The record gives the reactivity of an RNA of 207 nucleotides to 2A3 and DMS. The 2A3 profile rests on 1,456 reads. The reactions ran in a buffer of 150 mM KOAc, 10 mM MgCl2 and 150 mM bicine (pH 8.5), at 24 C. Source: RMDB library OK3TST, as collected in RNAgym. Values cover nucleotides 27 to 156.
RNA sequence: GGGAACGACUCGAGUAGAGUCGAAAACGCAGGUAUCUUGGGUGGAACACUCACACAAGGCACUGAUCCAGAAACCGUAGUGACGGGGCCUGUGGAAUUUGACUCGCGUAAGGUAUCGGAAGGUUCUUUGUUUGUGGCGUUGGCCGGAUCGCGUGUAAGCUAUUACGGUAUUCGUACCGUAAUAGCUAAAAGAAACAACAACAACAAC
Reactivity to 2A3 in 0.01 (KOAc 150mM, MgCl2 10mM, bicine 150mM(pH8.5), 24C), signal-to-noise 2, nucleotides 027 to 156: c050g030c030a020g020g040u070a030u070c000u020u040g030g030g020u050g050g020a120a090c090a040c090u110c020a030c030a000c010a060a100g020g000c030a010c100u080g030a140u020c000c020a050g060a100a090a060c020c030g050u080a050g050u040g140a010c010g000g000g000g020c000c020u030g000u030g050g070a060a090u100u100u100g020a050c000u020c060g040c030g140u070a050a070g000g020u040a040u070c000g040g050a030a010g030g010u050u000c020u040u110u050g090u050u120u170g060u040g000g000c050g020u060u040g070g000c010c020g030g010a030u070c040g010c030g010u110g030u150a060
Reactivity to DMS in 0.01 (KOAc 150mM, MgCl2 10mM, bicine 150mM(pH8.5), 24C), signal-to-noise 2, nucleotides 027 to 156: c060g040c030a090g010g030u000a060u000c040u020u010g020g020g050u000g010g020a110a140c080a070c090u020c030a070c030a050c020a070a050g000g000c040a080c020u010g000a070u000c030c020a210g000a100a150a090c050c050g040u000a190g020u000g000a090c000g020g020g010g010c060c010u000g020u010g020g020a070a180u000u000u000g010a110c000u000c000g020c060g000u000a130a070g020g020u000a060u000c020g020g000a140a120g010g000u000u000c040u000u000u000g010u000u000u010g040u000g020g010c060g000u000u020g030g030c030c020g030g000a050u000c050g030c020g000u010g010u020a120